[RMDB]
RNA sequence: GGGAACGACUCGAGUAGAGUCGAAAAACUGGCAGCCUAAGGGCCGCCGUCCUCGCACUGGCUCGCUGACGGGCUAGGGUUCGCAAGAACCAGCGAGGUCAUUUACGUCAGAUAAGCCCCGUCGGUGUCACGACUGCGGGGACGAAAACCAAGUGACCUGAAACAUAUACUUCGGUAUAUGUUUCAGAAAAGAAACAACAACAACAAC
Reactivity to 2A3 in 0.01 (KOAc 150mM, MgCl2 10mM, bicine 150mM(pH8.5), 24C), signal-to-noise 5, nucleotides 027 to 156: a010c090u100g010g000c010a010g010c010c010u110a220a260g090g000g000c000c010g010c000c000g030u030c010c000u000c000g000c010a030c030u020g020g000c010u010c050g000c010u020g000a000c000g000g000g000c000u010a030g040g020g000u010u000c010g000c090a080a050g010a010a000c000c000a010g010c010g010a010g010g020u010c000a020u090u220u210a050c020g000u000c010a000g010a030u020a010a010g010c000c000c000c000g010u030c040g010g020u040g010u020c010a000c020g010a000c010u010g000c000g000g000g000g000a000c000g000a000a010a010a010c060c200a170a010g010u010g020a020c000
Reactivity to DMS in 0.01 (KOAc 150mM, MgCl2 10mM, bicine 150mM(pH8.5), 24C), signal-to-noise 1, nucleotides 027 to 156: a050c010u020g060g030c030a040g010c010c000u000a100a160g170g020g020c000c000g040c020c000g010u000c000c010u000c000g000c060a300c050u000g030g030c000u010c030g060c010u000g000a040c000g010g000g030c010u000a000g010g020g010u000u030c000g080c270a180a150g020a050a010c000c010a130g000c000g010a060g000g020u020c040a040u000u000u000a060c020g000u010c030a070g010a130u000a300a130g000c000c000c010c020g030u000c040g030g010u020g000u000c000a030c020g000a100c000u010g000c040g010g000g030g000a000c020g000a080a040a050a060c050c050a070a100g000u000g010a170c130
Structure probing data (2A3 and DMS) for a 207-nucleotide construct. Source: RMDB library ARCHII, as collected in RNAgym. The reactions ran in a buffer of 150 mM KOAc, 10 mM MgCl2 and 150 mM bicine (pH 8.5), at 24 C.